[RMDB]
RNA sequence: GGGAACGACUCGAGUAGAGUCGAAAAGGCUCCCACUUCGGUGGGAGCCAAAGCUGAACGCGCAGCAAGCGUUAAACAUGGAAAAACGCACGUCGAAUGCGCAAAGCUUCCCCUUCGGGGGAAGCAAGGUGUAAGUUAUGUUCGCAUAACUUACACCAAAAGAAACAACAACAACAAC
Reactivity to DMS in 0.01 (KOAc 150mM, MgCl2 10mM, bicine 150mM(pH8.5), 24C), signal-to-noise 4, nucleotides 027 to 126: g010g010c010u000c000c000c000a000c000u000u020c150g040g020u000g010g000g020a010g020c010c000a000a010a050g020c100u000g010a070a090c200g010c010g040c010a060g000c040a200a180g000c000g000u000u010a050a050a130c110a190u000g000g010a040a060a040a040a020c010g000c030a090c250g010u010c110g000a080a110u010g000c000g010c020a070a080a150g010c000u000u000c000c000c000c010u000u000c140g030g000g010g000g010a000a010g010c000a000a010
Reactivity to 2A3 in 0.01 (KOAc 150mM, MgCl2 10mM, bicine 150mM(pH8.5), 24C), signal-to-noise 4, nucleotides 027 to 126: g010g020c000u010c010c020c000a010c010u030u050c210g110g000u000g010g020g010a000g010c000c010a010a000a000g000c000u020g070a070a010c080g010c010g010c010a010g020c030a090a090g000c010g010u020u050a090a240a020c070a150u270g090g030a090a080a020a030a000c010g020c010a030c070g110u110c060g120a130a070u050g000c000g000c000a030a060a030g000c000u000u010c000c000c000c000u000u080c190g030g000g010g000g000a000a000g000c000a000a040